Chemical mapping of a 177-nucleotide RNA with 2A3 and DMS.
Source: RMDB library M2PK90, as collected in RNAgym.
For 2A3, 592 sequencing reads were counted.

RNA sequence: GGGAACGACUCGAGUAGAGUCGAAAAUUACUAGUCUGUGAUGAAUUGCUUUGACUUCUGACACCUCGUAUGAAAACUGCACGUGCAGUCUGAUUAUUUAGCAAGACUGUGGCUUAAAAUAAAUCAAACUGACUAUGCGAUUCGUCGCAUAGUCAGUAAAAGAAACAACAACAACAAC
Reactivity to 2A3 in 0.01 (KOAc 150mM, MgCl2 10mM, bicine 150mM(pH8.5), 24C), signal-to-noise 1, nucleotides 027 to 126: u100u020a000c000u010a030g050u060c000u020g080u100g060a140u000g010a020a160u120u060g030c030u070u050u140g090a190c000u070u040c010u060g010a000c010a070c060c030u040c030g000u110a050u130g070a050a000a030a060c070u030g060c050a020c060g120u140g000c000a000g000u000c000u000g010a040u020u140a100u110u220u090a040g010c030a040a000g000a090c040u030g030u040g100g000c000u050u010a070a210a000a040u220a030a090a050u050c100a090a000
Reactivity to DMS in 0.01 (KOAc 150mM, MgCl2 10mM, bicine 150mM(pH8.5), 24C), signal-to-noise 1, nucleotides 027 to 126: u020u000a080c020u010a100g020u000c050u020g000u000g040a070u000g000a110a030u000u000g000c090u000u000u000g000a090c040u000u010c020u000g010a140c050a070c040c000u010c070g000u000a020u010g000a080a080a080a150c120u000g000c040a070c260g000u020g020c010a030g010u000c020u010g010a060u000u010a040u000u010u010a040g020c040a080a070g000a060c040u000g030u000g010g000c020u000u010a050a030a010a040u010a060a030a050u000c100a090a070